[RMDB]
RNA sequence: GGGAACGACUCGAGUAGAGUCGAAAAGAUAUGGAUUCGACAGAUUCUUUGAUCUGGUCACUCGGAAACGAGUGCCAGGGAGAAUCUUUCGAAUCCUAAGUCAAACUAGUAUCUUCGGAUACUAGAAUCAUUUAUUUAUGUUCGCAUAAAUAAAUGAAAAAGAAACAACAACAACAAC
Reactivity to 2A3 in 0.01 (KOAc 150mM, MgCl2 10mM, bicine 150mM(pH8.5), 24C), signal-to-noise 4, nucleotides 027 to 126: g030a020u070a040u170g000g000a000u010u010c000g000a000c010a030g020a010u040u020c000u300u300u100g070a120u060c000u010g040g090u300c080a000c010u000c000g020g010a080a120a080c010g000a000g010u000g000c000c000a000g000g010g000a000g010a000a000u010c000u000u000u000c010g000a000a000u000c000c000u010a050a000g020u010c040a030a070a170c000u010a020g000u000a010u000c010u040u120c300g180g010a000u010a020c000u010a000g010a010a100
Reactivity to DMS in 0.01 (KOAc 150mM, MgCl2 10mM, bicine 150mM(pH8.5), 24C), signal-to-noise 6, nucleotides 027 to 126: g010a050u000a300u000g000g010a010u000u000c000g000a030c080a020g000a010u000u000c000u000u000u020g000a070u010c000u000g000g010u020c030a000c000u000c000g000g000a160a120a240c010g010a020g020u000g010c010c000a010g010g010g000a010g010a020a000u000c000u000u000u000c000g010a010a010u000c000c000u000a010a090g010u000c020a150a160a300c010u000a000g000u010a010u000c000u000u010c250g020g000a020u000a010c000u000a010g000a130a140